[RMDB]
RNA sequence: GGGAACGACUCGAGUAGAGUCGAAAAUCUCUAUUGCCGUGCGCAUAUAGAACAUCCUGAUGUCUCUGGUGUUUGUAAAUAUAAGGGUAAGUUUGUCCAAAUCCCUGCUCAGUGUGUCCGUGACCCUAAAUCUGAACCUUCGGGUUCAGAAAAAGAAACAACAACAACAAC
Reactivity to DMS in 0.01 (KOAc 150mM, MgCl2 10mM, bicine 150mM(pH8.5), 24C), signal-to-noise 3, nucleotides 027 to 129: u040c000u030c010u030a080u000u000g050c000c000g040u070g060c260g080c070a050u070a000u040a000g000a050a140c100a080u040c020c020u020g000a080u040g040u030c100u020c080u030g000g030u000g020u000u000u000g020u000a000a000a000u030a170u000a040a050g020g030g040u040a040a070g010u000u000u000g030u020c010c100a060a150a090u030c000c020c010u030g020c060u000c050a040g000u030g010u020g020u040c040c060g090u030g000a080c000c020c040u000a040a100a130
Reactivity to 2A3 in 0.01 (KOAc 150mM, MgCl2 10mM, bicine 150mM(pH8.5), 24C), signal-to-noise 4, nucleotides 027 to 129: u010c010u000c000u020a070u030u110g000c010c020g150u120g050c150g010c040a020u050a010u010a150g090a040a050c030a050u040c000c020u050g030a070u080g100u010c020u000c010u110g030g010u000g050u020u060u010g080u080a030a100a020u200a020u030a110a030g020g020g060u090a090a080g010u060u110u160g150u050c020c000a020a050a040u000c010c000c010u000g010c010u000c020a030g020u040g000u000g040u110c010c000g030u040g070a060c000c000c050u050a050a040a050